This 177-nucleotide RNA was probed chemically with DMS.
RNA sequence: GGGAACGACUCGAGUAGAGUCGAAAAGGGAACGUGAGCUGGGUUUAGACCGUCGUGAGACAGGUUAGUUUUACCCUACUGAUGAGUUCGUUGUCUAAACAGUAAUCCAACCCAGUACGAGAGGAACGUUUUACACUGCGUUCGCGCAGUGUAAAACAAAAGAAACAACAACAACAAC
Reactivity to DMS in 0.01 (KOAc 150mM, MgCl2 10mM, bicine 150mM(pH8.5), 24C), signal-to-noise 1, nucleotides 027 to 126: g000g020g030a100a040c120g000u000g030a110g020c030u010g030g000g020u000u000u030a110g000a010c000c040g030u030c020g010u040g010a100g030a050c050a040g010g020u000u020a050g030u000u000u000u030a060c060c010c030u010a040c010u000g010a080u000g010a070g000u010u000c050g000u010u000g000u030c030u030a050a060a080c060a050g000u010a070a070u000c050c090a020a140c010c000c000a110g000u000a160c120g000a110g020a130g030g010a100a070c180